Source: RMDB library OK2TRN, as collected in RNAgym.
The record gives the reactivity of an RNA of 177 nucleotides to DMS and 2A3.
DMS adducts were read by reverse transcription with MarathonRT.
The reactions ran in a buffer of 150 mM KOAc, 10 mM MgCl2 and 150 mM bicine (pH 8.5), at 24 C.
RNA sequence: GGGAACGACUCGAGUAGAGUCGAAAAGCAAGGACAACGGCAACCACACACAUGACCAGGACAGACUCGGUGUAGUGCUUGACAACAUCUAUCAAGGGUCAACCAGGUACGAGGCAGGGAGAGCUCCACUAUAACCAGGAUUCGUCCUGGUUAUAGUAAAAGAAACAACAACAACAAC
Reactivity to DMS in 0.01 (KOAc 150mM, MgCl2 10mM, bicine 150mM(pH8.5), 24C), signal-to-noise 9, nucleotides 027 to 126: g010c080a080a080g010g010a050c060a050a070c100g010g010c050a060a070c060c050a070c080a070c090a070c080a060u000g000a070c050c030a070g010g010a080c130a120g010a050c040u000c040g010g010u000g020u000a030g010u000g010c050u000u000g020a090c090a070a090c060a040u010c040u000a050u000c080a090a130g010g000g010u000c040a080a110c050c030a060g010g010u000a050c090g010a070g000g010c050a050g000g000g000a060g000a090g010c050u010c060c080
Reactivity to 2A3 in 0.01 (KOAc 150mM, MgCl2 10mM, bicine 150mM(pH8.5), 24C), signal-to-noise 7, nucleotides 027 to 126: g030c020a030a060g060g020a040c020a060a030c080g050g000c010a030a040c020c000a030c000a010c000a000c010a110u110g040a050c010c030a020g030g030a030c030a070g040a050c010u020c060g050g000u080g040u060a050g020u020g050c060u040u090g040a020c020a080a030c010a110u060c030u090a090u090c050a060a080g030g010g020u020c010a010a020c040c020a020g030g000u040a040c050g020a050g040g000c020a010g030g010g010a050g010a010g030c020u020c030c010